An RNA of 207 nucleotides, treated with DMS and 2A3 and read out base by base. The reactions ran in a buffer of 150 mM KOAc, 10 mM MgCl2 and 150 mM bicine (pH 8.5), at 24 C. Values cover nucleotides 27 to 156. For 2A3, 1,705 sequencing reads were counted. DMS adducts were read by reverse transcription with MarathonRT. 2A3 adducts were read by reverse transcription with SuperScript II with manganese.

RNA sequence: GGGAACGACUCGAGUAGAGUCGAAAAGUUAGGUGAGGCUCCUAUGCAAACACAGGCCUCUGCCCAAAAAUGUCCAAAGACGCCAAUGGGUAGAACAGGGAUUGUCGGAUUAAGGCUUUCCAUAAUGAAAACAAAGUAUGCUUCGGCAUACUUUGAAGCUAUUACAACUCUUCGGAGUUGUAAUAGCAAAAGAAACAACAACAACAAC
Reactivity to DMS in 0.01 (KOAc 150mM, MgCl2 10mM, bicine 150mM(pH8.5), 24C), signal-to-noise 1, nucleotides 027 to 156: g010u010u000a010g030g010u000g020a030g030g030c050u000c010c030u000a110u020g030c040a130a110a110c090a120c050a080g010g020c050c010u010c020u000g020c010c010c000a040a050a070a130a140u010g000u000c050c050a070a120a130g000a070c040g030c040c050a050a160u000g000g050g000u000a050g010a070a040c030a120g000g020g010a090u000u000g010u010c020g010g010a170u000u010a090a130g010g030c090u010u000u000c010c000a110u000a090a130u010g000a100a020a100a200c030a000a000a020g000u000a000u000g010c000u000u010c300g060g010c000a000u010a000c010u010u000u010g010a030a090
Reactivity to 2A3 in 0.01 (KOAc 150mM, MgCl2 10mM, bicine 150mM(pH8.5), 24C), signal-to-noise 3, nucleotides 027 to 156: g030u040u040a000g000g030u010g020a020g010g020c020u120c070c020u040a050u190g080c080a090a110a070c060a020c050a120g060g000c000c000u000c010u010g000c020c000c010a000a010a000a010a020u020g000u010c030c030a190a040a150g020a010c000g050c020c010a020a020u010g010g000g000u000a020g040a030a060c070a040g040g000g020a030u040u020g010u030c020g020g050a120u270u120a090a070g000g000c010u010u010u070c010c000a040u180a110a120u180g060a040a050a000a030c020a000a000a000g000u010a000u000g000c000u050u120c170g060g000c000a000u010a000c000u010u000u000g020a010a000